RNA sequence: GGGAACGACUCGAGUAGAGUCGAAAAGAAUAUAAAGCGCGAGGGACCAAUUGCGAGCGACCUCGCGCUACCAGCUGCCGACUCACCAAGCGCGCAGCCAGCUGGAGGUUACGCUCGCAAAAGAAGAGACCGCUAAUGAUUUCGAUCAUUAGCGGUCAAAAGAAACAACAACAACAAC
Reactivity to 2A3 in 0.01 (KOAc 150mM, MgCl2 10mM, bicine 150mM(pH8.5), 24C), signal-to-noise 2, nucleotides 027 to 126: g010a090a010u160a010u070a190a070a000g000c000g000c000g020a020g000g050g000a100c020c030a050a190u070u010g000c000g020a000g000c000g000a050c000c000u010c000g000c000g000c000u010a000c010c010a000g010c000u000g020c000c030g130a160c020u030c070a120c070c050a110a040g020c040g000c070g050c050a010g000c010c000a000g000c010u010g030g000a030g050g010u120u080a000c010g020c000u000c000g000c000a000a000a030a000g050a010a000g090a010
Structure probing data (2A3) for a 177-nucleotide construct. The reactions ran in a buffer of 150 mM KOAc, 10 mM MgCl2 and 150 mM bicine (pH 8.5), at 24 C.